[RMDB]
RNA sequence: GGGAACGACUCGAGUAGAGUCGAAAAAUCAGGCUAGCGCGGCGGGCCUGCCGUAGUUUCUGGCUCGGUGAGCGACGGUCCGGUUGCUUGGGUCCCCUGGCUGCCAUCAAAACCCCACCCUCGCAGCGUUAGCGCGGUAAUUCGUUACCGCGCUAACAAAAGAAACAACAACAACAAC
Reactivity to 2A3 in 0.01 (KOAc 150mM, MgCl2 10mM, bicine 150mM(pH8.5), 24C), signal-to-noise 6, nucleotides 027 to 126: a000u080c070a040g010g010c030u140a030g030c130g000c020g130g020c030g000g010g010c000c010u030g030c020c030g070u090a060g030u030u080u110c090u150g040g000c010u010c030g100g000u080g050a050g020c030g050a080c050g040g080u060c050c020g060g000u070u040g030c020u020u060g040g000g010u080c030c000c020c000u000g040g000c000u020g030c010c000a040u120c070a010a060a070a080c000c010c000c010a030c020c000c000u050c030g050c030a090g010c030
Reactivity to DMS in 0.01 (KOAc 150mM, MgCl2 10mM, bicine 150mM(pH8.5), 24C), signal-to-noise 3, nucleotides 027 to 126: a090u040c090a070g000g000c020u010a080g050c020g020c080g020g030c190g010g000g000c030c010u020g000c050c060g000u020a070g010u000u000u020c100u010g000g000c020u020c020g040g040u000g020a070g010c020g020a060c050g000g000u010c040c060g030g000u020u020g010c030u000u010g010g000g000u000c000c010c000c020u010g000g000c010u000g030c030c050a050u020c120a050a060a080a140c110c010c040c020a110c000c020c000u000c020g000c110a070g020c070
The record gives the reactivity of an RNA of 177 nucleotides to 2A3 and DMS. For DMS the reverse transcriptase was MarathonRT. Source: RMDB library OK1LIB, as collected in RNAgym. The DMS profile rests on 5,175 reads. Conditions: 150 mM KOAc, 10 mM MgCl2 and 150 mM bicine (pH 8.5), 24 C.